[RMDB]
RNA sequence: GGGAACGACUCGAGUAGAGUCGAAAAGCAUUCCACUUCGGUGGAAUGCAAAAGCCGGCUGCAAGAAAAGUGCUUCAAAGAGUGGGAGCACUGCCGAAGAAAAAAGUUCCAUGUUCGCAUGGAACAAGUAGAAGUAAUGGUUCGCCAUUACUUCUACAAAAGAAACAACAACAACAAC
Reactivity to 2A3 in 0.01 (KOAc 150mM, MgCl2 10mM, bicine 150mM(pH8.5), 24C), signal-to-noise 5, nucleotides 027 to 126: g000c000a000u000u000c000c000a010c010u040u030c120g060g000u010g010g000a010a000u000g000c000a090a000a040a000g090c020c010g030g020c020u080g010c070a070a040g050a100a170a020a020g020u000g000c000u020u010c020a110a140a100g160a100g090u180g030g020g010a000g010c000a000c000u000g000c000c000g060a110a130g070a040a120a010a010a010a010g000u000u000c000c000a000u010g050u010u050c250g010c060a000u000g000g000a010a000c010a000a010
Reactivity to DMS in 0.01 (KOAc 150mM, MgCl2 10mM, bicine 150mM(pH8.5), 24C), signal-to-noise 4, nucleotides 027 to 126: g010c000a000u000u000c000c000a010c000u000u020c180g030g010u000g010g000a010a000u000g010c010a020a040a150a240g010c110c000g000g010c000u010g020c130a100a090g010a090a070a070a080g010u000g000c000u000u000c020a070a110a170g010a170g020u000g010g000g000a010g000c010a000c000u000g010c040c010g010a090a120g010a000a080a070a050a090a090g000u000u000c000c000a010u000g000u000u000c200g030c010a000u000g010g010a000a010c010a030a060
Structure probing data (2A3 and DMS) for a 177-nucleotide construct. Reactivities are rounded to 0.1 and cut off at 0 and 3.